[RMDB]
RNA sequence: GGGAACGACUCGAGUAGAGUCGAAAAGAUAUGGAAUAUGGGGAGCGAUUCGGGUCGGAAACGACCUCCUUUCGCGAGGAUCCCGCUAUUCCUAAGUCAAAGUGGUGGUUCUUCGGAACCACCACAAGAUGGCAAGAACGUUCGCGUUCUUGCCAUCAAAAGAAACAACAACAACAAC
Reactivity to 2A3 in 0.01 (KOAc 150mM, MgCl2 10mM, bicine 150mM(pH8.5), 24C), signal-to-noise 1, nucleotides 027 to 126: g000a030u030a020u080g000g000a000a000u000a080u130g000g000g020g030a060g030c010g010a000u080u080c090g020g000g030u010c010g020g110a030a030a050c030g000a000c000c000u110c010c000u030u070u010c000g010c060g030a100g140g030a020u010c050c000c050g090c030u000a000u020u020c010c020u060a090a000g020u030c070a190a020a030g010u000g000g000u020g000g000u000u050c010u030u030c300g010g000a010a000c000c000a010c000c000a000c000a000a010
Reactivity to DMS in 0.01 (KOAc 150mM, MgCl2 10mM, bicine 150mM(pH8.5), 24C), signal-to-noise 2, nucleotides 027 to 126: g010a060u010a300u020g010g000a030a020u000a010u000g000g020g000g010a030g040c020g030a010u010u010c220g010g000g020u000c000g010g000a050a070a130c010g020a010c000c010u010c070c050u000u000u000c030g020c040g010a110g000g000a120u010c010c000c060g020c160u000a010u000u000c000c000u000a060a160g020u000c000a070a170a170g010u010g000g010u000g010g000u000u000c000u000u020c190g010g020a010a000c000c000a020c000c000a000c000a000a030